[RMDB]
RNA sequence: GGGAACGACUCGAGUAGAGUCGAAAAGAUAUGGAUCCUUCCAGGGAGCGUACUCGGAAACGAGACGCUUUGAUCUGGCGGGAUCCUAAGUCAAAUCGCAGACUAGACUUCGGUCUAGUCUGCGAAAGUAGAGAUACUACUUCGGUAGUAUCUCUACAAAAGAAACAACAACAACAAC
Reactivity to DMS in 0.01 (KOAc 150mM, MgCl2 10mM, bicine 150mM(pH8.5), 24C), signal-to-noise 3, nucleotides 027 to 126: g000a030u010a300u000g000g000a010u000c000c010u000u000c000c000a020g000g010g010a010g020c000g010u000a130c000u000c000g010g000a080a060a160c010g010a010g020a050c000g010c000u000u000u010g000a070u010c000u000g000g010c080g000g000g000a000u000c000c000u000a000a060g010u000c030a070a140a160u000c000g010c000a010g000a020c000u000a010g000a020c000u000u010c240g040g010u000c000u000a010g000u000c000u000g010c000g010a000a000a100
Reactivity to 2A3 in 0.01 (KOAc 150mM, MgCl2 10mM, bicine 150mM(pH8.5), 24C), signal-to-noise 3, nucleotides 027 to 126: g010a020u040a040u140g010g000a000u000c000c000u010u000c000c010a060g120g130g000a000g000c020g010u130a300c030u000c000g030g020a050a050a040c010g010a000g010a010c000g000c000u020u040u080g010a050u040c000u000g000g000c000g000g010g010a000u010c000c010u000a030a010g000u010c010a050a000a140u020c000g000c000a000g000a010c000u000a000g000a010c020u150u190c300g010g000u000c000u010a000g030u000c010u000g010c010g000a000a000a000